[RMDB]
RNA sequence: GGGAACGACUCGAGUAGAGUCGAAAAAUUCACUUUCCUCAGGAACAAGCCUGGCUUGAGGAUGCUCAGGUCUUCAUCCAAAAGACCCUGUGUCCAGCUGUCAAGGAGCCUAAUGUCCAGUUGACUCCAUUGGUAAUUGAUUGUGUGAAGACUGUCAAUCAGGUGAUGAUUUCGAUCAUCACCUGAUAAAAGAAACAACAACAACAAC
Reactivity to 2A3 in 0.01 (KOAc 150mM, MgCl2 10mM, bicine 150mM(pH8.5), 24C), signal-to-noise 2, nucleotides 027 to 156: a000u200u140c090a050c140u100u040u000c000c010u030c010a000g010g030a100a070c020a130a060g060c000c060u050g060g040c010u050u070g040a050g050g010a040u060g000c050u040c010a020g050g000u000c010u050u030c040a230u050c030c060a030a100a030a030g030a030c020c000c030u020g020u040g000u000c020c000a050g030c120u060g020u070c020a110a060g010g000a000g030c000c000u090a080a080u120g070u150c050c010a040g070u060u110g030a070c010u000c010c020a180u010u100g010g000u050a060a010u100u080g120a090u070u000g020u010g010u010g020a030a020g020a060c040u070g050u070c000a030
Reactivity to DMS in 0.01 (KOAc 150mM, MgCl2 10mM, bicine 150mM(pH8.5), 24C), signal-to-noise 1, nucleotides 027 to 156: a120u010u010c040a090c040u010u010u000c010c010u000c000a100g000g010a120a140c030a090a170g030c080c040u000g000g000c020u010u010g000a070g010g030a050u000g010c000u000c090a120g020g000u000c000u000u000c030a100u000c110c100a160a040a120a130g000a050c000c050c020u000g010u000g040u000c000c010a130g030c060u000g000u000c040a080a090g020g000a070g030c000c000u030a020a030u000g010u000c100c060a290g000u010u010g000a050c040u000c000c000a230u010u000g000g010u000a120a080u020u000g010a120u000u000g000u000g050u000g000a080a050g020a070c020u000g010u000c120a150
Structure probing data (2A3 and DMS) for a 207-nucleotide construct.
It was measured as part of the RMDB library OK3TST.
Conditions: 150 mM KOAc, 10 mM MgCl2 and 150 mM bicine (pH 8.5), 24 C.
Reactivities are given for positions 27 through 156.
For DMS, 2,088 sequencing reads were counted.